[RMDB]
RNA sequence: GGGAACGACUCGAGUAGAGUCGAAAAUCUCAGGUCGGGCGAGGGUCCUCAGUUCUCUCUAUUCUUUCUUUUUGAAAGAGGAGACUGCUGGACCAAACGCCCGAACCGGGAUGAGCCGCAUGCCGGGGAGCCCUAUGAUUCGUCAUAGGGAAAAGAAACAACAACAACAAC
Reactivity to 2A3 in 0.01 (KOAc 150mM, MgCl2 10mM, bicine 150mM(pH8.5), 24C), signal-to-noise 9, nucleotides 027 to 129: u010c010u010c020a040g020g060u010c000g000g000g000c010g010a050g060g030g030u010c010c000u000c010a100g020u300u050c020u000c010u000c040u100a250u140u010c010u040u010u020c010u050u290u110u160u300g010a010a000a000g000a010g000g010a000g000a000c010u010g030c060u010g010g000a000c000c000a010a020a000c000g000c000c000c000g000a000a000c000c000g000g000g000a010u000g010a010g020c000c020g040c060a050u150g030c020c010g000g000g010g030a040g030
Reactivity to DMS in 0.01 (KOAc 150mM, MgCl2 10mM, bicine 150mM(pH8.5), 24C), signal-to-noise 9, nucleotides 027 to 129: u020c010u020c010a080g000g020u000c020g000g000g000c020g000a120g000g040g020u020c000c000u000c010a040g000u040u020c020u010c010u020c140u060a160u020u010c010u010u000u010c010u020u050u030u030u050g010a020a000a010g000a030g000g000a000g000a000c010u000g010c160u000g000g000a000c010c010a010a020a060c020g010c000c000c010g020a010a010c020c010g020g000g010a020u010g000a060g030c020c030g020c090a080u060g020c050c010g020g010g010g010a160g020